Chemical mapping of a 177-nucleotide RNA with DMS and 2A3. The RNA was probed in 150 mM KOAc, 10 mM MgCl2 and 150 mM bicine (pH 8.5) at 24 C. Source: RMDB library OK2TST, as collected in RNAgym.
RNA sequence: GGGAACGACUCGAGUAGAGUCGAAAAGGAGAAGAAAUGAAUAGAAGCAGGACAGUCACGGUGACUGAGAGACCACCUGUGCGACAGACGGUCUCAGAACACAACACUGAGAUUCCAACCGUGGAAGCAAGCCGUCAUAUUUCGAUAUGACGGCUUGAAAAGAAACAACAACAACAAC
Reactivity to DMS in 0.01 (KOAc 150mM, MgCl2 10mM, bicine 150mM(pH8.5), 24C), signal-to-noise 3, nucleotides 027 to 126: g010g010a130g000a070a070g020a030a080a070u000g010a090a130u010a040g010a060a110g030c030a050g000g000a130c050a050g010u000c040a070c150g000g010u010g010a090c080u010g000a130g000a050g000a050c030c030a110c070c010u010g000u000g000c140g030a100c020a000g010a060c090g010g000u000c010u000c010a100g020a090a060c100a060c130a040a040c140a070c070u000g010a080g010a170u000u000c040c050a140a090c080c040g020u000g010g020a100a080g000
Reactivity to 2A3 in 0.01 (KOAc 150mM, MgCl2 10mM, bicine 150mM(pH8.5), 24C), signal-to-noise 2, nucleotides 027 to 126: g050g070a060g010a070a030g040a060a110a040u190g040a090a090u080a160g080a120a010g030c080a020g000g020a040c020a030g010u040c000a000c110g100g060u090g060a050c040u050g020a040g000a010g010a110c000c000a030c030c020u020g020u090g140c080g120a020c020a050g020a000c040g000g060u000c000u000c000a000g130a120a020c100a010c000a070a100c040a010c010u030g050a010g020a060u100u060c020c000a020a020c010c040g000u080g040g060a050a000g060